[RMDB]
RNA sequence: GGGAACGACUCGAGUAGAGUCGAAAAAUGGCGGUGUCGGUUGCGGUGGUGGAGGGUUGCUGAGGGCCGGCGCCUCGGCCCUCCGCGGUGCAGUUUUGCAUGAACAUGCCGUGCGGGGCGGCAAAGGCCUGCUGGGAUUAUUCGUAAUCCCAGCAGGAAAAGAAACAACAACAACAAC
Reactivity to 2A3 in 0.01 (KOAc 150mM, MgCl2 10mM, bicine 150mM(pH8.5), 24C), signal-to-noise 2, nucleotides 027 to 126: a010u130g060g000c030g010g050u040g030u120c060g050g000u120u090g100c020g000g040u070g060g100u080g020g050a060g000g030g000u190u210g040c020u050g000a040g000g000g010c010c020g000g000c030g170c000c050u050c010g030g000c000c000c000u000c000c000g000c000g050g000u030g020c050a080g040u090u200u300u090g020c070a080u080g030a020a010c010a100u100g010c010c000g000u010g050c070g050g000g000g010c000g000g000c000a020a110a010g110g000
Reactivity to DMS in 0.01 (KOAc 150mM, MgCl2 10mM, bicine 150mM(pH8.5), 24C), signal-to-noise 1, nucleotides 027 to 126: a080u030g000g030c000g060g020u020g000u000c060g000g000u010u020g040c050g020g010u010g000g000u000g000g000a130g000g000g050u030u030g070c020u000g020a060g000g010g000c020c030g020g000c080g000c010c070u010c070g030g010c000c000c000u030c020c040g000c000g030g000u000g000c100a080g000u040u000u000u070g010c110a090u050g000a080a100c080a090u010g040c000c000g010u010g010c110g050g000g000g050c070g020g030c110a000a160a120g000g000
About this RNA
This 177-nucleotide RNA was probed chemically with 2A3 and DMS. For DMS the reverse transcriptase was MarathonRT. The DMS profile rests on 2,453 reads. 2A3 adducts were read by reverse transcription with SuperScript II with manganese. The reactions ran in a buffer of 150 mM KOAc, 10 mM MgCl2 and 150 mM bicine (pH 8.5), at 24 C. For 2A3, 905 sequencing reads were counted. It was measured as part of the RMDB library OK1LIB. As a SHAPE reagent, 2A3 marks flexible, mostly unpaired nucleotides at the ribose 2'-OH.